[RMDB]
RNA sequence: GGGAACGACUCGAGUAGAGUCGAAAAGAUAUGGAUGUGGAAGCUCGAUGAGUCGUGAGUCGGAAACGACUCCGACGAGAGCCCACAUCCUAAGUCAAAACCCGAACCGCGUUCGCGCGGUUCGGGACUGAGAGUCAUAGUUCGCUAUGACUCUCAGAAAAGAAACAACAACAACAAC
Reactivity to DMS in 0.01 (KOAc 150mM, MgCl2 10mM, bicine 150mM(pH8.5), 24C), signal-to-noise 1, nucleotides 027 to 126: g000a010u000a040u000g010g000a000u000g000u000g010g010a140a160g030c010u000c010g030a300u000g000a160g020u000c010g010u010g000a020g010u010c000g020g000a000a000a000c000g020a000c000u000c000c010g000a010c010g000a010g000a000g020c000c000c000a000c010a000u020c000c000u000a000a060g000u000c000a100a060a130a200c010c000c000g000a010a010c000c000g000c000g020u000u010c210g010c010g090c020g000g010u000u000c010g000g030g000a000
Reactivity to 2A3 in 0.01 (KOAc 150mM, MgCl2 10mM, bicine 150mM(pH8.5), 24C), signal-to-noise 3, nucleotides 027 to 126: g020a000u000a010u060g010g000a000u000g000u020g050g040a300a300g050c010u030c020g300a300u300g050a040g020u010c010g070u150g120a010g010u000c000g000g000a020a010a000c000g000a000c000u010c000c000g000a010c000g010a030g000a000g020c010c000c000a000c010a000u000c000c000u000a000a000g010u000c000a000a090a030a100c040c000c010g000a000a020c010c010g040c010g170u070u170c300g010c000g010c030g240g000u010u020c000g000g000g000a010